[RMDB]
RNA sequence: GGGAACGACUCGAGUAGAGUCGAAAAAUUCUUUGUGUUAUGACAUCUCAGGCACUCUUUGAGUCCUUAGAGUUUACUGAAUUGUCUUUUACUAAUUACAAGCUCCAGUCUCAGAUUGUAACUGGCCAAACCACAGGCUUCGGCCUGUGGAAAAGAAACAACAACAACAAC
Reactivity to DMS in 0.01 (KOAc 150mM, MgCl2 10mM, bicine 150mM(pH8.5), 24C), signal-to-noise 4, nucleotides 027 to 129: a000u000u020c060u040u000u030g020u000g010u090u000a070u030g010a070c030a000u000c090u020c020a040g000g050c300a040c010u010c020u040u030u080g050a010g060u070c120c040u020u010a040g020a020g000u000u000u000a200c060u000g010a040a070u060u000g000u030c000u000u000u000u000a150c240u000a020a100u000u050a080c210a090a150g020c180u020c070c050a000g020u060c110u080c050a040g010a080u000u040g040u080a030a080c080u000g020g030c130c040a030a020a060
Reactivity to 2A3 in 0.01 (KOAc 150mM, MgCl2 10mM, bicine 150mM(pH8.5), 24C), signal-to-noise 3, nucleotides 027 to 129: a000u070u030c040u080u090u080g090u030g050u160u080a060u140g000a010c000a060u030c000u000c080a000g000g000c080a020c000u020c040u040u080u250g060a070g080u080c020c000u010u000a010g000a010g000u000u070u070a080c000u010g020a020a010u060u010g020u010c000u000u020u030u060a030c040u040a010a130u120u070a090c040a100a070g030c030u000c010c000a040g140u040c030u000c000a110g020a200u130u120g010u030a020a040c000u000g010g000c010c020a030a030a030
Background: The record gives the reactivity of an RNA of 170 nucleotides to DMS and 2A3. Reactivities are given for positions 27 through 129. For DMS the reverse transcriptase was MarathonRT. High DMS reactivity at an A or C suggests that its Watson-Crick edge is free. The 2A3 profile rests on 3,538 reads.